[RMDB]
RNA sequence: GGGAACGACUCGAGUAGAGUCGAAAAAGCCCUGGACACAGGGAGAGAGCAUGAGCGCUGUUCCUGCUCCCACUCCCUCAUCUGAGCAGGUGCUCCCAGGUACAGGUGCCGAGUCCCACCCAGAGGGAGUGAUGCCAACGUUCGCGUUGGCAUCACUAAAAGAAACAACAACAACAAC
Reactivity to DMS in 0.01 (KOAc 150mM, MgCl2 10mM, bicine 150mM(pH8.5), 24C), signal-to-noise 1, nucleotides 027 to 126: a150g000c010c000c000u000g000g000a020c100a080c060a100g060g000g010a020g010a240g010a050g010c020a100u010g010a060g050c080g040c080u000g010u010u000c000c000u000g030c030u000c000c100c160a110c060u000c020c000c000u000c010a300u010c080u000g000a100g020c050a020g020g020u000g000c030u000c000c000c000a070g000g000u000a040c000a010g000g020u000g070c010c000g000a120g000u000c010c040c000a170c040c040c040a130g000a030g010g000g020

Record summary
This 177-nucleotide RNA was probed chemically with DMS. For DMS, 1,060 sequencing reads were counted. The reactions ran in a buffer of 150 mM KOAc, 10 mM MgCl2 and 150 mM bicine (pH 8.5), at 24 C. Values cover nucleotides 27 to 126.